The data come from the RNA Mapping Database (RMDB), library VIROID. Chemical mapping of a 207-nucleotide RNA with 2A3. The RNA was probed in 150 mM KOAc, 10 mM MgCl2 and 150 mM bicine (pH 8.5) at 24 C.
RNA sequence: GGGAACGACUCGAGUAGAGUCGAAAACGAAGAGGGAUCCCCGGGGAAACAUACACGAGCGAGGCGGAGAUCGAGCGCCAGUUCGUGCGCGGCGACCUGUUGUUGCUUCGGCUUCUUCUUGUUCGCGUCGUGCGUGGAACGGCUCCUUCUUCACUGCCCUAUCCGUAGAGUUCGCUCUACGGAUAGGAAAAGAAACAACAACAACAAC
Reactivity to 2A3 in 0.01 (KOAc 150mM, MgCl2 10mM, bicine 150mM(pH8.5), 24C), signal-to-noise 3, nucleotides 027 to 156: c070g000a040a000g010a010g010g020g050a060u130c100c020c010c020g030g020g010g080a140a170a010c040a030u110a040c010a010c040g010a010g010c010g010a030g030g050c050g000g000a020g000a110u090c020g000a010g020c000g020c050c010a010g000u020u020c020g010u040g070c120g000c060g170g000c010g000a020c010c010u020g010u110u140g070u130u230g090c020u100u130c090g030g020c050u030u000c000u060u030c000u060u170g060u110u060c020g000c030g170u060c030g010u030g010c010g010u060g000g060a050a030c000g010g000c000u000c000c000u000u000c000u000u000c030a020c050u050g000c000